[RMDB]
RNA sequence: GGGAACGACUCGAGUAGAGUCGAAAAUGGCUUAGUCUAACGACAACUGUUGCCACGUACUUAUAGGGUCGGACUCUCAUUGCAGUAGCGACUUAAUGGGUGAUUUGCUAGGAACUGCGCAGAGACAGUAACACUCGCGAUUCGUCGCGAGUGUUACAAAAGAAACAACAACAACAAC
Reactivity to 2A3 in 0.01 (KOAc 150mM, MgCl2 10mM, bicine 150mM(pH8.5), 24C), signal-to-noise 1, nucleotides 027 to 126: u070g000g040c020u030u030a040g000u080c020u010a040a000c030g000a030c020a090a030c080u190g150u300u130g070c000c000a010c040g020u030a020c010u040u080a010u140a100g050g000g080u010c020g000g000a060c010u000c050u000c010a090u000u210g050c010a030g030u050a010g000c000g040a010c070u000u100a140a130u100g120g010g020u130g020a140u100u000u180g000c020u000a010g010g190a130a060c010u040g000c030g120c100a040g000a000g070a060c030a100
Reactivity to DMS in 0.01 (KOAc 150mM, MgCl2 10mM, bicine 150mM(pH8.5), 24C), signal-to-noise 1, nucleotides 027 to 126: u000g000g000c010u000u000a080g000u000c010u020a180a130c230g000a120c050a040a060c170u010g000u010u000g010c120c000a050c060g000u010a090c060u000u000a090u030a210g000g010g000u000c000g010g000a230c090u000c010u000c040a210u010u010g020c100a080g030u000a030g010c000g050a060c100u000u030a090a140u000g000g010g000u000g010a120u000u000u000g000c000u000a300g000g010a080a160c010u000g060c030g000c180a140g000a110g010a060c230a170
Structure probing data (2A3 and DMS) for a 177-nucleotide construct. The DMS profile rests on 676 reads. Reactivities are given for positions 27 through 126. The reactions ran in a buffer of 150 mM KOAc, 10 mM MgCl2 and 150 mM bicine (pH 8.5), at 24 C. It was measured as part of the RMDB library OK2TRN. DMS adducts were read by reverse transcription with MarathonRT.